[RMDB]
RNA sequence: GGGAACGACUCGAGUAGAGUCGAAAAAUCCUCAGGUUCAUAAGCGUGAUGAUUGGUUGUUCAUGCUCCAUGCAUGACAUGUGCCUCCUUUGAACCUUGUUACGACCUUGGCACAUUACCCAUCUGAAAAAGACGUUCGCGUUCGCGCGAACGUCAAGGAGCAAGAUUAGUUCGCUAAUCUUGCUCCAAAAGAAACAACAACAACAAC
Reactivity to 2A3 in 0.01 (KOAc 150mM, MgCl2 10mM, bicine 150mM(pH8.5), 24C), signal-to-noise 2, nucleotides 027 to 156: a000u040c000c020u000c010a010g010g040u020u010c010a050u030a300a030g050c110g130u100g110a110u060g000a020u090u100g000g030u030u090g050u120u030c010a000u010g010c000u090c250c030a130u300g010c000a000u010g000a000c000a010u000g000u030g000c000c000u020c000c000u030u020u000g010a010a010c000c000u010u040g050u010u080a070c090g020a090c040c070u050u050g030g000c000a000c000a040u090u070a040c000c000c000a050u020c040u090g060a010a030a040a050a050g000a010c000g000u000u000c000g000c030g040u020u050c210g010c000g000c020g100a000a000c000g010u000c000a000a010